[RMDB]
This 177-nucleotide RNA was probed chemically with 2A3 and DMS. For 2A3, 995 sequencing reads were counted. The reactions ran in a buffer of 150 mM KOAc, 10 mM MgCl2 and 150 mM bicine (pH 8.5), at 24 C.
RNA sequence: GGGAACGACUCGAGUAGAGUCGAAAAUCUGAUUUUCAUUUGCUACCAUCAUUCUUGUUUCACCGUGCCUACAAUUCCCUCGUAUCACUAGAGCUCUAGCUUUUAGGUAGCAACCAGGAUGAGUUAAGGUACUCACAGAUUUCGAUCUGUGAGUACCAAAAGAAACAACAACAACAAC
Reactivity to 2A3 in 0.01 (KOAc 150mM, MgCl2 10mM, bicine 150mM(pH8.5), 24C), signal-to-noise 1, nucleotides 027 to 126: u040c030u030g100a100u050u040u050u120c060a050u080u030u060g030c010u020a030c020c010a050u060c000a060u160u000c010u080u060g050u000u090u050c020a050c040c030g080u050g030c020c020u120a070c030a060a090u060u040c000c000c000u010c060g050u090a100u160c020a030c070u050a000g000a000g090c010u010c020u050a030g000c000u110u030u060u140a040g000g010u020a000g000c020a040a010c030c010a080g010g030a020u050g000a040g000u020u120a040a050
Reactivity to DMS in 0.01 (KOAc 150mM, MgCl2 10mM, bicine 150mM(pH8.5), 24C), signal-to-noise 2, nucleotides 027 to 126: u000c060u010g000a060u000u000u000u000c060a160u010u000u000g000c010u010a040c020c000a240u000c130a080u010u000c080u020u000g020u000u010u000c070a070c120c090g010u000g000c080c040u000a050c060a060a170u000u000c030c010c010u010c120g020u000a060u010c060a060c080u000a090g030a040g000c000u020c070u000a060g020c050u000u000u000u000a080g010g010u020a030g000c060a070a060c070c050a050g000g000a090u020g000a110g000u000u000a060a140